RNA sequence: GGGAACGACUCGAGUAGAGUCGAAAAUAUGCCUGCUGGACUCAUUCCUGCGGUUAUGAUUAUGUCUACAACCCUUUCUUUGUCGAUGUUCAACAGUGGGGUUAUGUAGGCAAUCUUGCUACUAAUCGACCGCCUGUCUUCGGACAGGCGAAAAGAAACAACAACAACAAC
Reactivity to 2A3 in 0.01 (KOAc 150mM, MgCl2 10mM, bicine 150mM(pH8.5), 24C), signal-to-noise 5, nucleotides 027 to 129: u210a080u050g020c000c000u000g030c010u030g070g020a060c010u040c120a040u040u020c000c020u040g000c010g010g000u050u030a090u130g020a010u010u040a070u110g000u030c000u000a010c000a030a070c020c000c000u050u210u080c070u060u100u030g020u010c130g200a230u200g090u240u120c020a000a010c000a080g010u000g010g000g000g000u040u010a120u130g000u000a000g000g000c000a000a000u060c030u020u100g070c060u050a110c020u030a030a050u020c020g010a020c000
Reactivity to DMS in 0.01 (KOAc 150mM, MgCl2 10mM, bicine 150mM(pH8.5), 24C), signal-to-noise 1, nucleotides 027 to 129: u090a000u050g010c010c000u000g070c070u020g020g040a050c190u050c110a200u060u000c040c030u030g050c020g000g010u000u010a040u060g040a000u000u040a000u070g010u010c030u020a000c020a020a090c030c130c000u030u060u030c050u000u000u000g000u020c060g040a000u060g030u000u040c050a060a080c120a030g030u030g000g010g020g000u010u030a020u050g050u040a010g000g040c020a030a010u000c070u030u110g020c160u030a120c250u040a000a000u040c050g030a060c050
Record summary
Chemical mapping of a 170-nucleotide RNA with 2A3 and DMS. In probing experiments dimethyl sulfate is read out at A N1 and C N3, which are open when not base-paired. For DMS the reverse transcriptase was MarathonRT. For 2A3 the reverse transcriptase was SuperScript II with manganese. Values are in units of 0.01, from 0 to 300, in steps of 10. The 2A3 profile rests on 9,680 reads. The data come from the RNA Mapping Database (RMDB), library 15KLIB.